The data come from the RNA Mapping Database (RMDB), library M2PK50.
Structure probing data (2A3 and DMS) for a 177-nucleotide construct.
The reactions ran in a buffer of 150 mM KOAc, 10 mM MgCl2 and 150 mM bicine (pH 8.5), at 24 C.
DMS adducts were read by reverse transcription with MarathonRT.

RNA sequence: GGGAACGACUCGAGUAGAGUCGAAAACUGUCGUUCUUCGGAACGACAGAAAGAACGCGUGGGUCACGCAAGGAGGAGCGUGUGGGACGCGACAAACCCUAAAAAGCGUUCGGUUCGCCGAACGCAACACCAUUAUAGGCUUCGGCCUAUAAUGGUGAAAAGAAACAACAACAACAAC
Reactivity to 2A3 in 0.01 (KOAc 150mM, MgCl2 10mM, bicine 150mM(pH8.5), 24C), signal-to-noise 7, nucleotides 027 to 126: c010u000g000u000c000g020u000u010c010u030u020c160g080g000a010a010c010g000a000c000a000g000a000a000a010g030a080a020c020g020c010g010u030g030g220g110u080c020a000c020g010c050a040a060g150g090a090g050g040a120g030c020g000u020g000u020g040g130g040a000c010g010c010g020a010c040a010a090a050c010c020c040u090a080a090a050a050a010g000c000g010u010u000c010g000g000u050u040c200g030c040c000g000a000a000c000g000c000a010a000
Reactivity to DMS in 0.01 (KOAc 150mM, MgCl2 10mM, bicine 150mM(pH8.5), 24C), signal-to-noise 4, nucleotides 027 to 126: c010u000g010u000c000g010u000u000c000u000u020c170g010g020a010a000c000g000a000c000a010g000a020a050a120g000a090a120c030g010c000g010u000g030g020g010u000c010a020c010g010c000a060a070g000g020a300g000g010a130g000c000g000u000g010u000g000g000g000a030c020g020c000g010a070c100a080a100a150c010c010c000u030a060a060a100a110a110g010c000g020u000u000c000g010g000u000u010c220g020c000c000g010a010a000c000g010c010a010a060